The record gives the reactivity of an RNA of 177 nucleotides to 2A3 and DMS. 2A3 adducts were read by reverse transcription with SuperScript II with manganese. For DMS, 1,088 sequencing reads were counted. The RNA was probed in 150 mM KOAc, 10 mM MgCl2 and 150 mM bicine (pH 8.5) at 24 C. For 2A3, 549 sequencing reads were counted. High DMS reactivity at an A or C suggests that its Watson-Crick edge is free. Reactivities are given for positions 27 through 126. DMS adducts were read by reverse transcription with MarathonRT.

[RMDB]
RNA sequence: GGGAACGACUCGAGUAGAGUCGAAAAUAUACAUCGGAAGUCGGCACAACACCGGACUCGCGGUGAGCGAUGCAGCGUAGCUUCUGCUACGCAGCUGCUGUGCGGAUGGCUAGCACAUGCUAGCCUAAUGGCGAUCGAUGUUCGCAUCGAUCGCCAUAAAAGAAACAACAACAACAAC
Reactivity to 2A3 in 0.01 (KOAc 150mM, MgCl2 10mM, bicine 150mM(pH8.5), 24C), signal-to-noise 1, nucleotides 027 to 126: u160a000u000a010c000a010u000c000g070g030a000a090g000u000c000g030g000c050a000c000a050a040c080a050c000c030g290g040a300c090u090c010g190c000g000g000u120g040a030g020c010g070a090u250g020c070a000g010c000g020u000a010g030c000u210u040c130u300g000c000u000a010c000g000c060a000g050c010u010g000c000u020g000u000g070c000g170g070a060u020g050g000c000u000a000g000c010a000c000a210u220g020c000u000a000g000c000c000u000a010
Reactivity to DMS in 0.01 (KOAc 150mM, MgCl2 10mM, bicine 150mM(pH8.5), 24C), signal-to-noise 1, nucleotides 027 to 126: u050a080u000a100c190a060u000c000g000g000a030a150g000u000c050g040g020c020a000c010a210a150c040a090c000c070g000g010a300c100u000c120g000c000g000g000u000g000a120g000c010g000a120u000g000c010a070g000c030g020u040a000g000c050u080u000c170u000g020c010u000a000c000g000c010a040g000c010u000g070c010u000g000u000g000c000g010g000a030u000g010g020c000u000a000g000c000a250c230a210u080g000c000u000a040g000c000c000u020a000